[RMDB]
Structure probing data (2A3 and DMS) for a 177-nucleotide construct. For DMS, 2,897 sequencing reads were counted.
RNA sequence: GGGAACGACUCGAGUAGAGUCGAAAAGAUAUGGAUAUACGGAGCGAUAAGCUAGUGUCGGAAACGACACAUAGCUUUUGACGCUCCAGUAUAUCCUAAGUCAAAGGCUGCGGUUCGCCGCAGCCAACUCUAUUCGAGAGUUCGCUCUCGAAUAGAGAAAAGAAACAACAACAACAAC
Reactivity to 2A3 in 0.01 (KOAc 150mM, MgCl2 10mM, bicine 150mM(pH8.5), 24C), signal-to-noise 2, nucleotides 027 to 126: g010a000u030a000u080g010g000a000u010a000u020a010c010g000g000a010g010c080g130a190u050a300a000g000c010u010a010g000u010g020u000c000g010g000a060a000a000c000g000a000c000a000c000a020u010a000g000c030u020u030u030u110g260a140c140g000c000u000c000c000a000g000u000a000u000a000u000c000c000u010a010a020g020u020c030a100a030a230g030g000c000u010g020c000g050g130u050u140c300g030c080c020g000c020a010g000c000c000a010a000
Reactivity to DMS in 0.01 (KOAc 150mM, MgCl2 10mM, bicine 150mM(pH8.5), 24C), signal-to-noise 2, nucleotides 027 to 126: g000a030u000a150u010g000g020a010u000a010u000a020c020g000g000a030g000c020g020a080u010a010a000g010c010u000a010g010u000g020u000c000g010g000a030a030a070c000g010a000c010a000c000a030u000a010g010c000u000u000u000u000g000a200c130g010c000u000c000c000a020g040u000a000u010a020u000c000c000u000a010a080g000u000c010a170a190a150g010g020c000u000g000c020g010g040u000u010c260g020c010c020g030c000a010g040c010c020a010a030
The data come from the RNA Mapping Database (RMDB), library TTRDES. For 2A3, 4,353 sequencing reads were counted.